[RMDB]
RNA sequence: GGGAACGACUCGAGUAGAGUCGAAAAAACGAGCCCACCAGAGAGCUCCCGUUCUUCGGCGUUUCGGGGAGGAAACGCCCGCCUAGAUCGAAUGAUCGAGAAAAUAGCCAGCCCGUCGCGAUUAUCCUAAUCUCGUUACGUUCGCGUAACGAGAUUAAAAAGAAACAACAACAACAAC
Reactivity to DMS in 0.01 (KOAc 150mM, MgCl2 10mM, bicine 150mM(pH8.5), 24C), signal-to-noise 3, nucleotides 027 to 126: a090a120c120g010a100g000c050c000c030a190c180c080a070g010a110g010a130g020c020u010c000c010c000g000u000u040c100u000u030c040g020g000c040g010u000u060u000c020g010g050g060g000a090g000g030a070a050a020c070g000c000c010c090g020c080c010u010a130g010a010u010c020g000a100a050u030g000a020u000c000g000a140g030a130a020a120a080u010a050g020c100c050a100g010c030c000c020g020u030c040g000c020g000a030u000u020a090u020c030c050
Reactivity to 2A3 in 0.01 (KOAc 150mM, MgCl2 10mM, bicine 150mM(pH8.5), 24C), signal-to-noise 2, nucleotides 027 to 126: a000a010c030g000a000g070c020c000c000a010c000c030a010g060a000g020a000g070c020u030c030c000c000g060u090u050c010u050u050c010g010g010c020g000u000u040u010c070g000g040g020g020a110g060g040a060a030a000c000g010c000c020c000g020c000c000u070a050g000a050u010c000g090a220a220u260g030a020u040c000g000a000g070a060a120a010a040u080a010g010c010c000a010g010c000c000c010g020u040c010g000c020g010a020u090u050a030u100c000c010
Structure probing data (DMS and 2A3) for a 177-nucleotide construct. The 2A3 profile rests on 1,911 reads. 2A3 adducts were read by reverse transcription with SuperScript II with manganese. Values cover nucleotides 27 to 126. It was measured as part of the RMDB library RFM100.